[RMDB]
RNA sequence: GGGAACGACUCGAGUAGAGUCGAAAACAUUACGAAUUCAGUCGCAAAUUGUAGAAUUAGCUACUCUACGAUUUAGUGAGCGUUAGUAACGUUGUAAUAUAAUAUAGUAUUUGGAAGGAUUAUAUUGGAGCCGCGGACAAGUUCGCUUGUCCGCGAAUCAAUACGUUAUCUUCGGAUAACGUAUUGAAAAAGAAACAACAACAACAAC
Reactivity to 2A3 in 0.01 (KOAc 150mM, MgCl2 10mM, bicine 150mM(pH8.5), 24C), signal-to-noise 7, nucleotides 027 to 156: c020a040u110u180a030c040g070a100a110u140u110c060a090g110u030c010g000c020a000a020a010u010u000g000u000a010g010a020a030u070u030a040g030c030u050a010c010u000c000u000a000c000g010a000u010u010u100a080g000u010g040a060g060c030g030u070u100a050g020u050a090a030c050g000u000u020g020u030a050a090u050a080u020a120a030u050a010u040a090g040u020a170u110u110u160g060g010a040a020g030g010a000u030u020a030u040a030u040u060g060g050a050g060c060c010g000c010g010g000a000c000a000a000g000u040u090c140g040c120u000u000g000u000c010c000g000c000g000a000a000
Reactivity to DMS in 0.01 (KOAc 150mM, MgCl2 10mM, bicine 150mM(pH8.5), 24C), signal-to-noise 2, nucleotides 027 to 156: c020a040u000u000a030c010g000a060a030u010u010c080a100g010u010c000g040c020a050a010a070u000u000g010u000a000g010a030a050u000u000a230g000c260u010a120c060u010c010u000a020c000g010a010u000u000u020a080g040u000g010a060g070c150g020u000u000a070g000u000a020a010c020g030u000u010g010u000a060a060u000a100u000a060a090u000a130u000a180g000u010a070u000u000u010g020g010a160a160g000g010a090u000u010a050u000a090u010u000g010g000a150g030c110c030g020c000g030g000a010c010a000a030g020u000u010c300g030c000u000u000g010u000c000c000g040c020g010a000a020